Source: RMDB library OK3TST, as collected in RNAgym. Chemical mapping of a 207-nucleotide RNA with DMS and 2A3. For DMS the reverse transcriptase was MarathonRT. The DMS profile rests on 7,357 reads. Conditions: 150 mM KOAc, 10 mM MgCl2 and 150 mM bicine (pH 8.5), 24 C.
[RMDB]
RNA sequence: GGGAACGACUCGAGUAGAGUCGAAAAGAAUGAAGGAUGCGGAAUGCGAAAGCACCGGAGGGACCGUUUUUUUGGGUGAAAGUCGACAGAAGGUCGACUCGUGAGCGCGCCCCUCACGCACCCGUCAGGGAUCUCCGGCCGCAAUAAGGGGCGCGAACAUAUACAUACAGUUCGCUGUAUGUAUAUGAAAAGAAACAACAACAACAAC
Reactivity to DMS in 0.01 (KOAc 150mM, MgCl2 10mM, bicine 150mM(pH8.5), 24C), signal-to-noise 3, nucleotides 027 to 156: g010a130a130u010g010a140a110g050g010a150u000g010c020g000g000a140a120u010g000c050g030a130a130a220g020c050a300c020c010g020g010a040g020g000g000a300c010c020g000u000u000u000u000u040u020u000g010g000g000u010g000a100a020a030g010u000c010g020a040c000a200g020a120a140g010g020u000c000g020a010c000u000c010g000u000g000a020g010c040g020c050g000c020c010c020c010u000c000a020c000g020c010a030c000c010c000g040u000c140a110g010g010g000a260u000c010u000c010c010g020g010c030c020g040c020a030a040u010a070a070g000g060g090g010c030g000c030g030a040a130
Reactivity to 2A3 in 0.01 (KOAc 150mM, MgCl2 10mM, bicine 150mM(pH8.5), 24C), signal-to-noise 6, nucleotides 027 to 156: g070a010a070u200g020a050a020g080g060a040u060g010c000g010g050a210a100u110g010c020g060a100a030a010g010c010a010c020c000g000g000a010g010g000g010a030c000c010g010u040u010u010u010u050u220u300g020g000g000u030g030a190a090a030g000u000c000g000a000c000a040g250a180a060g260g010u000c000g000a000c000u000c010g010u000g000a020g010c070g000c010g000c020c000c000c000u010c000a010c000g010c000a000c010c000c000g050u130c100a080g000g000g010a020u020c000u000c000c000g000g000c010c000g000c000a000a010u080a060a010g000g000g000g000c000g000c000g000a010a000